[RMDB]
RNA sequence: GGGAACGACUCGAGUAGAGUCGAAAACGAAGAACGCUCGGAGGCGCUGCUGCGGGAGCGCUCGCUGCACUACGUGGCCAGUAGCCGGGCGGGGGACAUGUUGGUGGUGACCUGGAGCGGACAGCGGAUAUUAUCGAACCUUCGGGUUCGAUAAUAUAAAAGAAACAACAACAACAAC
Reactivity to 2A3 in 0.01 (KOAc 150mM, MgCl2 10mM, bicine 150mM(pH8.5), 24C), signal-to-noise 6, nucleotides 027 to 126: c030g030a060a060g060a150a030c020g010c030u030c030g080g070a050g070g000c000g000c010u080g000c010u030g020c060g030g050g040a110g040c050g040c030u020c010g020c020u080g030c010a030c090u110a030c080g030u080g040g030c050c020a040g050u050a010g030c020c010g000g000g000c010g020g000g000g000g010a040c030a100u170g040u080u080g050g030u020g000g050u050g020a040c000c020u010g030g030a030g030c010g000g020a030c040a020g030c030g040g010
Reactivity to DMS in 0.01 (KOAc 150mM, MgCl2 10mM, bicine 150mM(pH8.5), 24C), signal-to-noise 4, nucleotides 027 to 126: c050g010a130a070g020a090a160c030g010c010u000c030g000g000a120g000g000c040g010c020u010g010c020u020g020c030g010g020g010a040g020c060g000c020u020c110g000c080u030g000c060a120c050u030a060c050g000u020g000g030c090c050a100g010u000a100g020c030c020g010g000g000c010g000g000g010g000g010a110c110a070u020g000u020u030g000g000u010g010g020u020g000a070c050c040u000g000g010a070g010c020g010g000a080c060a050g010c020g000g020